[RMDB]
RNA sequence: GGGAACGACUCGAGUAGAGUCGAAAAUCAACACAGCAGGUGUCAAUGCAGAAUGAUCCCUUAAACUUAGGUCACUUGACUCUUCUGAUUGCAAGCCCCAAAAGCCUGCCUGUCUUGCUCAGGGUAGCUGACUCACUUCUUUCGAGAAGUGAGUCAGAAAAGAAACAACAACAACAAC
Reactivity to 2A3 in 0.01 (KOAc 150mM, MgCl2 10mM, bicine 150mM(pH8.5), 24C), signal-to-noise 1, nucleotides 027 to 126: u040c000a000a050c050a000c010a080g000c000a020g000g030u050g040u060c040a040a100u180g050c020a020g120a100a050u070g020a030u090c060c000c000u000u140a140a140a050c040u040u060a030g000g000u060c020a060c100u070u050g070a070c000u000c010u090u020c010u040g040a080u000u020g010c030a050a070g010c000c000c030c000a060a080a050a000g020c000c000u020g010c010c000u030g030u020c010u040u050g010c020u010c020a010g000g000g040u010a040g070
Reactivity to DMS in 0.01 (KOAc 150mM, MgCl2 10mM, bicine 150mM(pH8.5), 24C), signal-to-noise 2, nucleotides 027 to 126: u000c040a120a080c120a110c040a070g010c090a030g000g000u000g000u000c040a050a060u040g020c080a060g000a120a060u000g010a040u000c040c010c030u000u000a050a100a150c130u010u000a060g020g020u000c060a120c110u000u010g010a050c010u000c020u000u020c020u020g010a100u000u010g050c110a100a070g000c020c000c030c090a040a060a080a210g020c030c040u000g000c040c010u020g000u000c070u020u000g000c060u000c050a190g000g010g020u000a030g010
Chemical mapping of a 177-nucleotide RNA with 2A3 and DMS. Conditions: 150 mM KOAc, 10 mM MgCl2 and 150 mM bicine (pH 8.5), 24 C. The 2A3 profile rests on 1,251 reads. Source: RMDB library OK2TST, as collected in RNAgym.